This 170-nucleotide RNA was probed chemically with 2A3 and DMS. Conditions: 150 mM KOAc, 10 mM MgCl2 and 150 mM bicine (pH 8.5), 24 C. Reactivities are given for positions 27 through 129. Source: RMDB library 15KLIB, as collected in RNAgym. The 2A3 profile rests on 95,492 reads.
[RMDB]
RNA sequence: GGGAACGACUCGAGUAGAGUCGAAAAGAACUGCUGGGUUCCCCUGAUGUCCAGUCCCUCCCCGUUCCUGGAGAAGGGAGACUCGGGAACGCCUAGCAUCUGAGGGACAAAGCCGCCCCCGGGCGCUACAGAUAGGAGUUCGCUCCUAUCAAAAGAAACAACAACAACAAC
Reactivity to 2A3 in 0.01 (KOAc 150mM, MgCl2 10mM, bicine 150mM(pH8.5), 24C), signal-to-noise 9, nucleotides 027 to 129: g030a050a040c060u040g000c000u010g010g000g010u040u060c030c010c000c020u060g060a090u220g080u030c030c020a030g050u020c010c000c000u020c010c010c000c010g070u110u070c020c030u080g060g020a090g020a110a080g040g020g010a030g010a010c000u010c010g010g000g020a030a020c030g050c020c020u020a010g010c000a010u020c040u050g030a100g020g030g010a020c050a040a140a010g030c040c020g020c010c010c000c000c010g020g010g000c020g010c030u090a050c040a040
Reactivity to DMS in 0.01 (KOAc 150mM, MgCl2 10mM, bicine 150mM(pH8.5), 24C), signal-to-noise 9, nucleotides 027 to 129: g040a090a150c080u010g010c000u020g000g010g020u010u020c080c050c030c050u050g010a070u070g020u040c030c110a100g000u020c010c000c000u020c020c040c020c030g020u050u030c070c030u060g040g020a070g010a120a090g000g000g000a070g020a070c010u000c060g010g000g010a040a040c080g040c030c030u000a050g020c020a060u040c030u000g020a090g010g000g010a070c070a060a080a080g010c060c020g000c060c020c000c010c040g010g020g020c070g010c060u020a010c120a100